[RMDB]
RNA sequence: GGGAACGACUCGAGUAGAGUCGAAAACAGCGGGCUGGGCCGGGAGCACUCCAAGUACGGCCUGGAUGAAUUCCUGUACAUCAAGUACAUCCAGAUGGGCAUUGGAUACGACAACAAGGGCAUCUGACCAUACCGAUUAGUUCGCUAAUCGGUAUGGAAAAGAAACAACAACAACAAC
Reactivity to 2A3 in 0.01 (KOAc 150mM, MgCl2 10mM, bicine 150mM(pH8.5), 24C), signal-to-noise 2, nucleotides 027 to 126: c020a000g080c060g040g050g000c030u050g000g040g000c020c020g000g020g000a040g040c040a040c110u000c010c030a050a000g040u050a060c040g000g000c000c000u010g000g010a040u040g030a050a140u130u030c010c020u000g030u060a070c020a120u160c100a150a090g020u020a030c010a020u010c020c000a010g020a150u120g020g090g020c070a060u030u060g040g000a040u050a130c070g020a020c040a050a000c020a050a080g050g020g000c020a050u040c020u030g020a040
Reactivity to DMS in 0.01 (KOAc 150mM, MgCl2 10mM, bicine 150mM(pH8.5), 24C), signal-to-noise 4, nucleotides 027 to 126: c070a050g000c010g000g010g010c050u000g010g000g020c010c100g030g000g000a110g010c160a080c130u000c020c040a080a080g010u010a100c060g000g000c070c000u010g000g010a080u000g000a090a190u010u010c030c020u010g010u010a050c070a090u010c170a060a110g010u010a100c030a080u000c040c030a070g010a100u010g020g010g000c070a090u020u010g010g020a080u010a060c080g010a070c080a070a040c080a040a080g010g010g010c120a080u000c040u000g000a300